[RMDB]
RNA sequence: GGGAACGACUCGAGUAGAGUCGAAAAACUUUGAUGGCGGUACUAUGAAUUGAUGCAAGGGGUGGAGCGACCUUAAACAGUUCUGGUGGUGCUCUGAAUGGAGUGCUCUACUGAGAUUAUAAAAUAGCAUGCAUAGAGUGCUUCGGCACUCUAUGAAGUCCCGUCAGUAGUUCGCUACUGACGGGACAAAAGAAACAACAACAACAAC
Reactivity to 2A3 in 0.01 (KOAc 150mM, MgCl2 10mM, bicine 150mM(pH8.5), 24C), signal-to-noise 1, nucleotides 027 to 156: a000c010u020u130u120g060a010u130g000g000c010g020g010u050a020c010u070a110u050g070a030a020u080u020g050a070u080g100c060a020a000g000g000g000g000u040g010g010a050g000c000g000a040c000c000u060u070a090a130a000c020a090g040u040u040c030u060g060g000u010g000g050u010g000c000u010c010u030g060a100a050u120g000g010a040g060u060g000c010u000c030u120a040c030u060g020a000g000a050u040u150a090u270a100a100a020a070u160a050g090c080a040u090g030c000a000u000a010g000a000g000u000g000c000u030u020c070g000g000c000a000c000u000c000u000a000u010g010a000a000